[RMDB]
RNA sequence: GGGAACGACUCGAGUAGAGUCGAAAAUGAACGCUCUCAGCGACCAACUGUGGGAACUUUUUGAAUUCUGGUUUUCUCAGACUGGACCUGCCCAUCAUCAGAUUCAGGCCUAUAACGAGUUUGUCCAGGAGCUUCUCCCGAAUAUCAUCAGGGAGAACAAAGGAGAACCAUUCGUGGUUCUCCUUUGAAAAGAAACAACAACAACAAC
Reactivity to DMS in 0.01 (KOAc 150mM, MgCl2 10mM, bicine 150mM(pH8.5), 24C), signal-to-noise 1, nucleotides 027 to 156: u010g010a050a130c040g030c010u000c070u000c030a090g000c030g010a300c020c060a170a160c080u000g000u000g010g020g030a140a180c040u000u030u000u000u020g000a160a160u000u000c020u010g040g010u000u000u000u000c020u000c040a050g010a180c130u050g010g000a010c030c010u000g000c090c060c180a120u000c060a120u010c030a060g040a090u000u000c000a020g010g000c030c030u000a130u000a110a110c110g010a060g000u000u000u000g020u000c000c010a070g000g020a060g010c060u000u000c010u000c000c000c000g000a070a100u010a160u000c120a100u010c090a300g020g000g010a030g010a030a070
Reactivity to 2A3 in 0.01 (KOAc 150mM, MgCl2 10mM, bicine 150mM(pH8.5), 24C), signal-to-noise 1, nucleotides 027 to 156: u200g010a100a000c040g010c000u020c010u010c000a020g010c020g060a030c030c020a030a050c060u040g000u050g090g030g040a080a060c070u120u070u120u050u210g170a240a130u180u040c130u120g000g020u070u000u120u000c050u050c030a050g040a100c040u070g000g100a180c000c000u020g000c080c120c000a090u070c040a010u020c010a070g020a030u200u120c000a010g000g050c000c020u110a060u010a110a080c070g000a010g010u040u050u090g040u000c010c010a020g000g010a010g010c000u010u000c000u040c000c000c000g040a080a090u220a030u160c070a000u060c030a080g010g020g000a020g000a000a000